[RMDB]
RNA sequence: GGGAACGACUCGAGUAGAGUCGAAAAACAGUCAGUACGCUGACUGAGGGAAACGGGAGCCGGGCUUGGGACAAGAGCCAUCCCAAGUCCAAGGCCAAGUAGGGUCUAGUGAUGGUACGCCAUCACAAAAACUGGUCUACCUUCGGGUAGACCAGAACUCAUGUGUCAACUUCGGUUGACACAUGAGAAAAGAAACAACAACAACAAC
Reactivity to 2A3 in 0.01 (KOAc 150mM, MgCl2 10mM, bicine 150mM(pH8.5), 24C), signal-to-noise 1, nucleotides 027 to 156: a010c000a000g000u020c010a000g020u080a060c190g040c140u010g000a000c000u000g000a040g000g050g020a100a210a220c120g010g030g000a010g020c030c000g020g020g020c000u000u010g000g000g000a020c060a190a100g020a020g160c020c030a020u010c000c000c000a010a000g010u000c000c000a010a050g010g000c000c040a010a010g020u050a040g010g020g000u010c030u130a070g010u040g010a010u010g000g000u040a020c180g010c020c000a010u040c000a000c000a010a100a000a000a000c010u010g000g010u000c000u000a000c000c000u050u070c240g090g000g010u000a000g000a000c000c000a000g020a000a000